Description:
An RNA of 177 nucleotides, treated with DMS and 2A3 and read out base by base. The DMS profile rests on 1,317 reads.
[RMDB]
RNA sequence: GGGAACGACUCGAGUAGAGUCGAAAAGAUGAAGAAAUGAACGUGGAAUGUGUUGCACCUCAUUGAAAUUCAACUUUCGAGAGUCGUAUCUCCACACUGGAGUUGAUUCAGCUCAAACGGUUGCAACCCUGGGAAAUUACUUCGGUAAUUUCCCAGGAAAAGAAACAACAACAACAAC
Reactivity to DMS in 0.01 (KOAc 150mM, MgCl2 10mM, bicine 150mM(pH8.5), 24C), signal-to-noise 1, nucleotides 027 to 126: g020a090u030g000a000a100g000a090a060a020u000g040a030a040c270g090u000g000g000a170a020u120g000u000g010u070u000g000c000a040c000c000u000c010a080u010u060g040a010a100a090u000u000c030a030a020c040u030u000u040c050g000a130g000a010g050u000c050g000u000a070u000c000u060c040c020a120c270a040c120u000g000g000a030g000u000u000g000a090u010u010c060a050g000c260u000c010a030a100a190c140g010g000u030u020g010c050a070a020c180
Reactivity to 2A3 in 0.01 (KOAc 150mM, MgCl2 10mM, bicine 150mM(pH8.5), 24C), signal-to-noise 3, nucleotides 027 to 126: g050a010u100g000a010a080g090a020a080a020u200g000a100a030c030g010u130g010g110a160a300u140g150u050g090u080u110g040c030a000c000c010u000c060a030u000u000g080a100a070a030u080u040c050a030a040c010u000u050u040c020g030a040g000a000g050u000c000g010u020a300u020c000u030c030c020a090c010a010c030u130g070g030a010g050u020u010g060a170u230u180c010a010g000c000u000c020a090a050a070c090g080g020u050u090g010c010a020a040c010